[RMDB]
RNA sequence: GGGAACGACUCGAGUAGAGUCGAAAAGUGCUAGACGGGGAGUUAGCGGUGCCUUGUACCUGCAAUCCGCUGUAGCAGGGUUGAAUUCCUUGUUUGAGGCUAUAAUUUGUGGGGUUUGCCUCAUCUUGGUCAAUGUUGAGAAUUGGGUCCCACGCAAGGUAUAGAAACAGUUCGCUGUUUCUAUACCAAAAGAAACAACAACAACAAC
Reactivity to 2A3 in 0.01 (KOAc 150mM, MgCl2 10mM, bicine 150mM(pH8.5), 24C), signal-to-noise 3, nucleotides 027 to 156: g070u040g040c010u030a020g000a030c030g000g010g000g020a050g060u080u040a040g050c040g000g020u010g010c000c030u060u070g050u100a110c000c030u030g000c030a040a100u070c010c030g060c070u050g060u060a020g010c030a030g030g000g000u010u060g020a050a050u130u070c000c000u030u020g050u060u040u050g020a010g000g020c000u070a050u030a300a120u140u130u120g030u040g030g010g020g020u030u090u120g010c000c010u010c010a020u000c020u040u050g020g000u050c060a050a090u080g020u090u060g030a060g030a080a110u070u070g040g020g000u050c030c010c010a020c000g010c010a080a090
Reactivity to DMS in 0.01 (KOAc 150mM, MgCl2 10mM, bicine 150mM(pH8.5), 24C), signal-to-noise 2, nucleotides 027 to 156: g000u000g020c020u000a110g010a100c020g010g000g000g020a230g040u000u010a070g020c000g020g020u000g010c020c070u000u000g010u000a050c020c010u000g040c030a050a170u000c020c030g010c020u020g040u010a160g030c030a100g000g000g020u000u030g000a130a170u000u000c010c010u000u000g040u000u000u000g010a040g010g030c000u010a110u010a050a100u000u010u010g000u020g060g010g030g010u000u000u000g010c030c000u000c030a040u000c050u000u000g040g010u020c110a070a080u000g010u000u000g000a100g010a070a220u000u000g010g020g000u000c010c000c000a040c090g000c120a090a210